The record gives the reactivity of an RNA of 177 nucleotides to DMS and 2A3. For 2A3 the reverse transcriptase was SuperScript II with manganese. For DMS the reverse transcriptase was MarathonRT. The DMS profile rests on 4,840 reads.
RNA sequence: GGGAACGACUCGAGUAGAGUCGAAAAAGCAGUCGAUUCGUCGACUGCUAAUGGGUCGGGACUACAUCACAGGUUCUUCGCAAGCCCUCUUUGGACCAGUAAAAAAGAGCUUAUUCGUAAGCUCUAACCCGUUAAUCUUAUUCGUAAGAUUAACGGGAAAAGAAACAACAACAACAAC
Reactivity to DMS in 0.01 (KOAc 150mM, MgCl2 10mM, bicine 150mM(pH8.5), 24C), signal-to-noise 4, nucleotides 027 to 126: a030g000c000a000g000u000c000g010a030u000u010c180g020u000c000g000a000c000u000g000c000u000a010a030u000g020g000g020u000c050g000g000g000a190c040u000a070c120a050u010c090a050c120a120g010g000u000u000c020u010u000c110g000c120a090a150g000c030c010c010u000c070u000u000u010g010g010a100c030c040a120g010u010a010a040a080a090a050a020g010a010g010c000u000u000a020u000u010c140g010u000a010a010g000c000u000c000u020a040a080
Reactivity to 2A3 in 0.01 (KOAc 150mM, MgCl2 10mM, bicine 150mM(pH8.5), 24C), signal-to-noise 5, nucleotides 027 to 126: a000g000c000a000g010u000c010g010a000u050u070c110g040u000c000g110a020c000u000g000c000u000a010a050u090g020g010g000u070c020g030g000g020a020c010u080a050c050a110u140c070a040c030a110g050g000u050u010c000u070u080c040g000c090a070a060g020c000c010c010u030c030u090u070u070g040g000a030c020c030a040g150u190a030a110a030a010a020a000g000a000g010c010u020u010a010u020u090c170g060u030a000a000g000c000u010c000u010a010a030